The data come from the RNA Mapping Database (RMDB), library TTRDES. Chemical mapping of a 177-nucleotide RNA with 2A3 and DMS. The DMS profile rests on 2,703 reads. The 2A3 profile rests on 4,379 reads. 2A3 is a SHAPE reagent: it acylates the 2'-hydroxyl of flexible nucleotides of all four kinds. The RNA was probed in 150 mM KOAc, 10 mM MgCl2 and 150 mM bicine (pH 8.5) at 24 C. Reactivities are rounded to 0.1 and cut off at 0 and 3.
[RMDB]
RNA sequence: GGGAACGACUCGAGUAGAGUCGAAAAGAUAUGGAACCACUCAGCGAGGAUCUAUGGGUCGGAAACGACCCUGUAGGGAGCUGUGUGGUUCCUAAGUCAAACUACACGAUCUUCGGAUCGUGUAGAAUCCUCAUUCUUACUUCGGUAAGAAUGAGGAAAAAGAAACAACAACAACAAC
Reactivity to 2A3 in 0.01 (KOAc 150mM, MgCl2 10mM, bicine 150mM(pH8.5), 24C), signal-to-noise 1, nucleotides 027 to 126: g000a000u020a020u040g030g010a000a000c000c000a000c010u080c030a000g020c000g090a300g070g020a030u000c010u050a040u190g000g010g000u000c010g010g000a010a000a010c010g000a000c000c070c010u020g000u040a010g000g050g020a040g000c020u000g090u000g010u000g040g010u010u010c000c000u000a020a000g000u000c010a000a010a100c000u000a000c000a000c000g000a010u010c020u040u090c180g150g000a000u000c000g020u010g000u000a010g000a000a070
Reactivity to DMS in 0.01 (KOAc 150mM, MgCl2 10mM, bicine 150mM(pH8.5), 24C), signal-to-noise 1, nucleotides 027 to 126: g010a020u000a030u020g000g000a020a010c000c010a000c000u010c040a000g030c000g020a120g040g010a020u000c010u000a060u000g030g010g040u000c010g010g000a000a010a030c000g000a000c000c000c000u000g000u010a010g010g010g000a010g020c000u000g000u000g010u000g000g000u010u000c000c000u000a000a040g000u000c010a170a140a190c010u010a000c010a020c020g010a010u000c000u000u020c230g020g000a000u000c000g020u000g010u000a010g000a090a120